Chemical mapping of a 177-nucleotide RNA with 2A3 and DMS.
Values cover nucleotides 27 to 126.
For DMS, 2,093 sequencing reads were counted.
DMS adducts were read by reverse transcription with MarathonRT.
The data come from the RNA Mapping Database (RMDB), library OK2TST.
RNA sequence: GGGAACGACUCGAGUAGAGUCGAAAACUGGCCCUCAAGGGCGUGGCCCAGGCGCUGGACGCACCCGGCCACCUGAUCACCAGUCGCCUGGAGCACAAGGCGGUGCUGGACACCGUGCAGCAACUCAGCCGUAAUGAUCAUUCGUGAUCAUUACGGCAAAAGAAACAACAACAACAAC
Reactivity to 2A3 in 0.01 (KOAc 150mM, MgCl2 10mM, bicine 150mM(pH8.5), 24C), signal-to-noise 2, nucleotides 027 to 126: c010u020g060g000c000c020c010u140c170a160a220g000g000g000c010g060u050g030g300c010c000c010a010g020g000c000g030c000u030g020g040a120c080g020c100a060c020c040c010g060g050c020c010a060c000c060u090g030a060u170c040a000c050c010a010g070u190c040g030c010c000u010g030g000a080g010c020a030c000a100a020g080g000c030g010g000u050g020c050u150g090g040a120c000a010c000c010g000u050g080c010a020g060c000a010a080c020u040c090a030
Reactivity to DMS in 0.01 (KOAc 150mM, MgCl2 10mM, bicine 150mM(pH8.5), 24C), signal-to-noise 3, nucleotides 027 to 126: c030u000g020g000c000c010c010u020c220a160a090g030g000g000c030g030u010g010g020c030c010c010a030g010g000c080g000c000u010g000g010a180c230g020c140a120c040c030c060g010g000c030c040a050c110c020u000g000a110u000c140a180c000c010a030g010u010c050g040c000c000u010g010g000a080g000c020a060c030a080a130g020g040c030g000g010u000g010c020u000g000g010a200c030a020c020c010g000u000g040c030a040g050c110a090a060c070u000c050a170